[RMDB]
RNA sequence: GGGAACGACUCGAGUAGAGUCGAAAACGUCGUGAACUAGCGACAAUGCCUUAGAUCCAUCGUUAUCUAACCGAAACAUCGUGACUAGUCGUAGAAUAGAACCAGGAGAGGGCGCUGGCAAACAAAGACGGGGUUUCUGAUUCGUCGGAAACCCCGUAAAAGAAACAACAACAACAAC
Reactivity to 2A3 in 0.01 (KOAc 150mM, MgCl2 10mM, bicine 150mM(pH8.5), 24C), signal-to-noise 2, nucleotides 027 to 126: c080g000u000c000g000u000g100a060a010c030u000a040g000c000g000a000c000a030a060u090g030c020c000u000u120a030g000a030u000c020c010a090u010c000g100u080u070a070u090c050u020a020a030c030c020g020a000a040a000c020a030u090c020g040u020g020a000c000u020a010g070u070c030g060u070a000g000a070a020u100a040g020a050a010c000c010a010g000g020a040g020a050g000g020g020c010g000c020u000g000g000c000a050a070a000c020a040a180a020g140
Reactivity to DMS in 0.01 (KOAc 150mM, MgCl2 10mM, bicine 150mM(pH8.5), 24C), signal-to-noise 3, nucleotides 027 to 126: c200g000u000c020g010u000g000a170a100c120u000a050g010c030g020a000c070a040a040u050g010c010c020u020u020a030g010a050u030c050c020a050u030c150g030u020u020a090u010c050u000a060a080c010c060g000a060a110a080c090a030u010c030g000u010g010a100c030u010a020g020u000c080g040u010a030g010a050a110u010a040g030a100a090c040c050a060g000g000a040g000a040g010g010g000c040g010c020u000g000g000c050a080a100a060c170a070a090a080g000